[RMDB]
RNA sequence: GGGAACGACUCGAGUAGAGUCGAAAAGAUAUGGAAGUGGUCCCGUAACAGCGACGAUCUAGACGUAACAUCACGUCGGAAACGACGUGUGGUCUAGGGAGCUGGAGAAGGGACCACUUCCUAAGUCCGACAGUCAAUAGUUCGCUAUUGACUGUCGAAAAGAAACAACAACAACAAC
Reactivity to DMS in 0.01 (KOAc 150mM, MgCl2 10mM, bicine 150mM(pH8.5), 24C), signal-to-noise 2, nucleotides 027 to 126: g000a050u020a300u020g000g060a000a010g040u000g000g000u000c010c000c000g000u010a110a300c000a000g010c000g000a070c250g000a030u020c000u000a000g000a020c000g030u000a060a160c170a030u000c020a000c000g040u010c000g050g000a030a100a230c000g000a010c000g030u000g020u010g020g000u000c010u020a010g000g000g000a010g010c000u000g000g020a050g010a120a270g000g000g040a000c000c000a000c000u000u000c010c000u000a010a100g010u010c040